[RMDB]
RNA sequence: GGGAACGACUCGAGUAGAGUCGAAAAAGGCAACGCAGUUUUGGGGGUUGGUGGGUACGGGCCAAUCAAGACGACUUAACAUUUCUUGUACAAGUGAUGCAUCCCGCAAUUAACUUUGCUGCCUCCAACCAUUAGCGGGAUUCGUCCCGCUAAUGGUAAAAGAAACAACAACAACAAC
Reactivity to DMS in 0.01 (KOAc 150mM, MgCl2 10mM, bicine 150mM(pH8.5), 24C), signal-to-noise 1, nucleotides 027 to 126: a080g020g040c070a010a070c030g000c160a070g010u000u000u010u000g010g010g000g000g000u000u010g000g050u010g020g010g020u000a080c190g030g010g000c050c060a050a120u000c130a020a040g000a070c230g020a030c080u030u010a070a090c090a070u000u020u000c020u000u010g010u000a070c150a020a040g000u000g000a050u040g000c050a100u000c010c040c010g000c030a020a060u000u000a110a040c040u000u020u020g000c040u000g010c020c020u000c000c010a090
Reactivity to 2A3 in 0.01 (KOAc 150mM, MgCl2 10mM, bicine 150mM(pH8.5), 24C), signal-to-noise 2, nucleotides 027 to 126: a000g060g010c020a060a000c080g000c080a050g010u040u030u090u130g030g000g000g020g080u090u040g010g010u040g060g000g040u040a050c020g000g070g000c000c010a020a010u040c030a030a030g050a010c090g030a050c070u080u050a090a000c020a090u080u070u000c020u070u030g030u040a050c010a180a020g040u060g080a040u070g030c020a070u050c010c020c020g060c050a000a080u110u040a080a020c080u030u020u080g010c020u000g010c030c000u030c000c010a010